Source: RMDB library TTRDES, as collected in RNAgym. The record gives the reactivity of an RNA of 177 nucleotides to DMS and 2A3. Reactivities are rounded to 0.1 and cut off at 0 and 3. For 2A3, 17,945 sequencing reads were counted. DMS adducts were read by reverse transcription with MarathonRT. The reactions ran in a buffer of 150 mM KOAc, 10 mM MgCl2 and 150 mM bicine (pH 8.5), at 24 C. High DMS reactivity at an A or C suggests that its Watson-Crick edge is free.
RNA sequence: GGGAACGACUCGAGUAGAGUCGAAAAGAUAUGGAAUCCCUGAACUACUAGCACCUUCGGAAACGAAGGUGAACUACUAGCAGGAAGAUUCCUAAGUCAAAGAUGAGGGCGGUUCGCCGCCCUCAUCCAUAUCGUUAAACUUCGGUUUAACGAUAUGAAAAGAAACAACAACAACAAC
Reactivity to DMS in 0.01 (KOAc 150mM, MgCl2 10mM, bicine 150mM(pH8.5), 24C), signal-to-noise 8, nucleotides 027 to 126: g000a010u000a030u020g000g010a030a010u000c020c010c000u000g010a100a050c170u010a300c020u000a000g010c000a010c000c000u000u000c000g010g000a010a010a030c000g010a020a010g010g010u000g000a010a010c040u020a300c020u000a010g010c000a010g000g010a300a180g010a040u000u000c000c000u000a010a120g000u000c010a090a110a130g000a010u010g010a020g010g000g030c000g020g010u000u010c250g030c000c000g010c000c000c000u000c000a000u000c000
Reactivity to 2A3 in 0.01 (KOAc 150mM, MgCl2 10mM, bicine 150mM(pH8.5), 24C), signal-to-noise 3, nucleotides 027 to 126: g000a000u000a010u030g000g000a000a000u010c000c000c000u000g010a040a050c070u240a040c010u000a180g010c010a000c000c010u000u000c000g000g000a000a010a000c000g000a000a000g000g000u000g000a000a010c000u090a020c010u010a010g040c000a000g060g020a120a270g020a030u000u010c010c000u000a000a000g000u020c030a100a170a110g010a000u010g000a000g000g030g020c020g040g060u100u170c300g050c080c000g000c000c000c000u000c000a000u000c010